The data come from the RNA Mapping Database (RMDB), library OK3TST.
Structure probing data (2A3) for a 207-nucleotide construct.
2A3 adducts were read by reverse transcription with SuperScript II with manganese.
RNA sequence: GGGAACGACUCGAGUAGAGUCGAAAAGGCUGCUGCCGGAGCCGAUACCGGAAUACGAGACCUCAUGUGCGGUCGAAUGCACUGAAGUACGAAAGUACGAAGAGGUCACACCGAGGACCGAGACUCGAUAUGCUCGGUAGAUGGAGCUUUACAUCAAACCUACUCCUGCAUUCGUGCAGGAGUAGGUAAAAGAAACAACAACAACAAC
Reactivity to 2A3 in 0.01 (KOAc 150mM, MgCl2 10mM, bicine 150mM(pH8.5), 24C), signal-to-noise 1, nucleotides 027 to 156: g020g000c030u000g000c000u030g000c020c000g050g000a000g000c090c200g040a020u080a180c000c000g040g030a110a090u230a120c010g010a070g020a040c000c000u000c000a010u010g010u000g010c010g030g080u130c070g070a120a120u220g000c010a000c000u080g120a170a000g000u000a000c000g080a040a110a100g000u000a000c000g000a120a000g000a000g030g000u020c040a000c010a000c000c020g000a060g000g040a000c000c000g070a080g000a070c000u000c000g170a200u050a080u300g020c000u000c040g000g000u000a000g030a020u010g090g000a000g000c000u120u020u070a050c060a080u030c050a140a050